Chemical mapping of a 177-nucleotide RNA with DMS and 2A3.
The 2A3 profile rests on 4,266 reads.
The DMS profile rests on 1,829 reads.
The reactions ran in a buffer of 150 mM KOAc, 10 mM MgCl2 and 150 mM bicine (pH 8.5), at 24 C.

RNA sequence: GGGAACGACUCGAGUAGAGUCGAAAAGAUCUUAGGUUCGCCUAAGAUCAAAUGAGCUAGCAAGGUUCAGCUAGCAAAGAUCGAAAGAUCAAAUGAACCAAAAAAGGAUAAAGUUCGCUUUAUCCAAGCAUAUAAAGCAGUUCGCUGCUUUAUAUGCAAAAGAAACAACAACAACAAC
Reactivity to DMS in 0.01 (KOAc 150mM, MgCl2 10mM, bicine 150mM(pH8.5), 24C), signal-to-noise 2, nucleotides 027 to 126: g010a010u000c000u010u000a000g000g020u010u010c270g020c000c000u000a000a000g010a030u010c000a060a070a080u000g010a130g020c000u010a000g010c000a110a040g000g010u000u000c000a020g010c000u000a010g020c000a020a080a090g000a010u000c000g000a160a060a140g000a010u000c000a050a080a050u010g010a000a020c000c000a000a020a030a080a120a100g000g000a020u000a000a010a020g000u000u010c230g000c010u000u010u000a000u000c000c010a040a060
Reactivity to 2A3 in 0.01 (KOAc 150mM, MgCl2 10mM, bicine 150mM(pH8.5), 24C), signal-to-noise 1, nucleotides 027 to 126: g000a010u010c000u000u000a020g000g020u040u050c150g040c070c000u000a000a000g000a000u000c010a000a000a010u040g000a010g010c000u000a000g020c030a240a090g040g000u020u010c000a000g000c000u000a000g000c020a040a140a000g000a000u010c010g010a040a010a030g000a000u010c010a000a000a010u030g000a010a000c000c000a000a120a050a070a000a040g010g000a010u020a010a010a000g030u040u130c230g040c130u010u020u010a000u000c000c020a000a000